[RMDB]
Overview: The data come from the RNA Mapping Database (RMDB), library M2PK50. Chemical mapping of a 177-nucleotide RNA with 2A3 and DMS. The 2A3 profile rests on 8,355 reads. For DMS the reverse transcriptase was MarathonRT. For DMS, 4,906 sequencing reads were counted. The reactions ran in a buffer of 150 mM KOAc, 10 mM MgCl2 and 150 mM bicine (pH 8.5), at 24 C.

RNA sequence: GGGAACGACUCGAGUAGAGUCGAAAACUACAUAGUUUCGACUAUGUAGAAACCAUUAGGAAGCAUGCAGAUGCAUAUGGACGAGGGCAACAAACCUAUUGCGAACAGCAGGUUUCGACCUGCUGAACCUAGAUAUCGAGUUCGCUCGAUAUCUAGGAAAAGAAACAACAACAACAAC
Reactivity to 2A3 in 0.01 (KOAc 150mM, MgCl2 10mM, bicine 150mM(pH8.5), 24C), signal-to-noise 5, nucleotides 027 to 126: c000u010a000c000a000u000a000g000u020u060u090c190g050a000c000u000a010u010g000u000a000g000a020a010a000c020c000a040u060u130a090g060g100a100a020g040c050a030u070g000c050a030g030a240u080g030c020a050u050a050u170g020g030a020c060g050a070g010g060g000c020a070a030c020a050a130a040c010c010u070a110u090u190g060c080g070a110a030c020a000g000c000a000g010g010u010u040u100c150g050a030c000c000u000g000c000u000g000a010a010
Reactivity to DMS in 0.01 (KOAc 150mM, MgCl2 10mM, bicine 150mM(pH8.5), 24C), signal-to-noise 4, nucleotides 027 to 126: c000u000a000c000a000u000a000g000u000u000u010c170g010a060c000u000a000u000g010u000a010g020a060a100a150c020c010a090u010u000a130g010g000a140a080g010c070a020u000g010c110a080g010a060u000g000c040a050u010a040u000g000g010a100c050g020a080g010g000g000c040a030a060c110a050a060a090c070c050u000a060u010u000g010c080g010a080a200c020a010g010c000a010g010g010u000u000u010c190g010a020c000c000u000g000c010u000g000a030a110